[RMDB]
RNA sequence: GGGAACGACUCGAGUAGAGUCGAAAAGUGCUUAUCGUGUGCCUUAUUGUGGGUUUCGUGCCUUAUGUAGAGUAAUGUUAUGUUCUCUACCUCGUUUGUGUGACAUCCCUAUCAAUGGAUCUCGCGACGAGCGUCGACAAUUCGUUGUCGACGCUCGAAAAGAAACAACAACAACAAC
Reactivity to 2A3 in 0.01 (KOAc 150mM, MgCl2 10mM, bicine 150mM(pH8.5), 24C), signal-to-noise 2, nucleotides 027 to 126: g110u050g040c090u220u090a050u120c010g000u010g020u020g040c000c000u140u130a140u020u290g020u120g040g020g040u020u000u130c060g010u000g000c000c080u040u100a030u060g000u010a000g050a040g050u150a110a090u130g070u240u240a130u110g080u040u020c000u040c000u000a000c000c000u110c000g090u070u080u070g050u030g010u010g000a020c040a080u130c000c000c040u040a050u160c110a120a050u090g000g000a070u020c030u000c030g020c000g020a040

Background: An RNA of 177 nucleotides, treated with 2A3 and read out base by base. It was measured as part of the RMDB library OK1LIB.